[RMDB]
RNA sequence: GGGAACGACUCGAGUAGAGUCGAAAAAGCGUGCUGCUGUGCAGCGGCCAGGCUUCAUCUCUAACAGCAGCGAACGGACAUGAGGGAGCGCAAACCCUCGUCCCAAACAUCAUGAAUGCGUCGCACGGGCUCCAGCGUCAGGGGCCAGAGGUGGGAACCUUUUACAAUCCUUCGGGAUUGUAAAAGGAAAAGAAACAACAACAACAAC
Reactivity to 2A3 in 0.01 (KOAc 150mM, MgCl2 10mM, bicine 150mM(pH8.5), 24C), signal-to-noise 1, nucleotides 027 to 156: a010g050c040g020u060g000c000u010g000c010u020g000u080g080c100a020g050c010g030g050c020c000a050g020g090c010u140u060c070a110u100c050u110c110u160a090a010c000a010g030c000a010g010c010g050a000a020c060g010g090a010c020a110u260g000a040g000g020g000a000g030c040g000c030a100a170a300c000c020c000u020c010g020u030c010c000c000a110a060a010c040a020u200c000a030u190g040a020a000u020g020c020g030u000c000g000c010a020c120g010g000g000c000u010c010c000a020g000c010g090u120c100a050g010g010g010g000c000c000a020g000a040g030g050u120g010g010g040a010a020

Structure probing data (2A3) for a 207-nucleotide construct. As a SHAPE reagent, 2A3 marks flexible, mostly unpaired nucleotides at the ribose 2'-OH. The RNA was probed in 150 mM KOAc, 10 mM MgCl2 and 150 mM bicine (pH 8.5) at 24 C.